Source: RMDB library TTRDEL, as collected in RNAgym. This 177-nucleotide RNA was probed chemically with DMS.
RNA sequence: GGGAACGACUCGAGUAGAGUCGAAAAGAUAUGGACGUGGUGUGGCGAGCUUGGACCUCGGAAACGAGCUAGCUCCCACCCACGUCCUAAGUCAAAAGAUAAUGGAGUCUUCGGACUCCAUUAUCAACAGUCCAUCUACCUUCGGGUAGAUGGACUGAAAAGAAACAACAACAACAAC
Reactivity to DMS in 0.01 (KOAc 150mM, MgCl2 10mM, bicine 150mM(pH8.5), 24C), signal-to-noise 1, nucleotides 027 to 126: g030a020u000a300u000g000g000a000c020g000u000g010g000u000g020u000g010g050c220g050a000g000c020u000u000g030g000a090c300c000u000c000g000g000a050a120a050c000g000a020g000c050u000a010g000c000u010c000c000c010a010c020c010c000a000c020g000u000c000c000u000a000a050g000u040c050a090a040a170a100g000a010u000a010a010u000g000g000a040g000u010c010u000u000c160g010g010a030c010u000c000c000a000u000u000a000u010c010a060a200